[RMDB]
RNA sequence: GGGAACGACUCGAGUAGAGUCGAAAAACUUUGUGCUAUUUUGAGAUAAAAGAAAUGCACACCUCAGAACAGCAAGGUGUUACAGCACAUAACUGCCUGUACAAUUUAAAAACUCGAUAAACCCAAAGCUUUGGUAGCAAGUCUUAGCAGGUGCUGAGGAUUUACUAAUCUUCGGAUUAGUAAAUCCAAAAGAAACAACAACAACAAC
Reactivity to 2A3 in 0.01 (KOAc 150mM, MgCl2 10mM, bicine 150mM(pH8.5), 24C), signal-to-noise 2, nucleotides 027 to 156: a000c030u050u010u080g000u030g030c010u030a050u070u080u070u050g080a120g000a100u300a250a130a000a000g040a000a100a000u110g000c000a000c000a020c030c000u080c020a100g030a180a130c000a000g050c020a110a000g000g020u020g020u040u060a030c040a030g000c030a030c020a010u130a060a030c080u120g080c070c010u000g020u020a020c020a080a060u000u060u300a120a290a130a090a030c020u040c080g010a010u110a130a100a180c000c000c050a020a050a000g060c060u120u130u120g010g040u030a030g030c040a090a000g000u030c040u070u090a020g030c010a030g000g060u040g000c010u000g020a030

An RNA of 207 nucleotides, treated with 2A3 and read out base by base. The RNA was probed in 150 mM KOAc, 10 mM MgCl2 and 150 mM bicine (pH 8.5) at 24 C. For 2A3, 561 sequencing reads were counted.